[RMDB]
RNA sequence: GGGAACGACUCGAGUAGAGUCGAAAACGAAGGUGCUGGGCUUCCAGUACCCCGGGGAGCAGAUGACGUUCGCCAUGAGGCCUUUCAGGGAAAACGGAGCCCCCAACUCGAGAAUGCUCUCACCGAAGGAUCUUUAGACCUUCGGGUCUAAAGAUCCAAAAGAAACAACAACAACAAC
Reactivity to DMS in 0.01 (KOAc 150mM, MgCl2 10mM, bicine 150mM(pH8.5), 24C), signal-to-noise 2, nucleotides 027 to 126: c020g050a250a080g000g040u000g000c000u000g060g000g000c300u040u040c000c000a050g000u000a020c030c000c040c050g000g000g000g000a210g000c000a110g040a200u040g000a080c060g000u000u000c300g000c000c040a010u020g000a030g000g000c140c230u010u000u000c090a030g000g000g000a020a020a030a010c110g000g000a080g000c030c000c000c000c020a070a000c010u090c010g040a080g000a050a160u000g000c020u000c000u010c000a230c120c120g000a130a100
Reactivity to 2A3 in 0.01 (KOAc 150mM, MgCl2 10mM, bicine 150mM(pH8.5), 24C), signal-to-noise 6, nucleotides 027 to 126: c040g040a060a010g010g010u020g020c010u000g010g060g050c060u300u110c050c000a010g020u030a020c010c010c000c000g010g000g000g010a170g010c030a030g030a230u170g060a100c030g010u020u040c110g040c050c020a100u100g040a060g100g110c070c040u110u180u070c050a030g000g000g050a000a100a010a030c030g020g020a010g020c000c000c000c000c030a010a050c030u020c010g050a060g050a150a060u110g010c010u010c010u010c020a100c000c050g040a110a060